[RMDB]
RNA sequence: GGGAACGACUCGAGUAGAGUCGAAAACGCUGGGCUUAGCUAGAAGUCGACACGGGAGUUAAAUAUCCUGAAGCGCGCACGGGAUAUUUAACGACGAUCGUGUUGACUUCUUGGACCUAAGCCUGUGCUGAAGCGCGCACGGCAACCGAAAGGUGCGGAUGGUUAUACAGUUCGCUGUAUAACCAUCAAAAGAAACAACAACAACAAC
Reactivity to 2A3 in 0.01 (KOAc 150mM, MgCl2 10mM, bicine 150mM(pH8.5), 24C), signal-to-noise 2, nucleotides 027 to 156: c050g010c010u040g000g000g000c000u000u000a000g000c000u000a000g000a010a000g010u000c000g000a000c000a000c000g000g020g000a020g000u000u000a010a000a000u000a000u000c010c010u020g020a150a060g010c010g000c000g000c020a020c030g010g000g000a000u000a000u010u000u010a000a000c000g050a070c000g000a000u010c000g000u000g000u000u010g000a000c000u000u000c000u000u060g010g000a010c010c000u000a000a000g000c000c000u010g020u040g000c030u120g060a070a030g010c000g020c010g000c020a010c020g060g000c050a140a180c020c010g060a130a040a020g000g010u020g010c020g050
Reactivity to DMS in 0.01 (KOAc 150mM, MgCl2 10mM, bicine 150mM(pH8.5), 24C), signal-to-noise 2, nucleotides 027 to 156: c110g010c030u000g000g010g020c000u010u000a010g000c020u000a020g010a020a010g020u000c010g030a030c000a010c000g010g000g010a040g020u000u000a000a030a030u000a010u000c000c010u010g000a030a120g040c000g030c000g030c030a300c000g030g010g000a020u000a000u000u000u000a000a010c010g010a080c250g010a000u010c000g010u000g020u000u000g000a020c010u000u000c000u000u010g020g010a020c300c000u010a020a040g020c000c000u000g040u000g020c020u000g000a150a070g030c030g020c040g020c000a020c020g010g010c000a150a150c010c000g000a050a200a190g000g010u010g020c030g030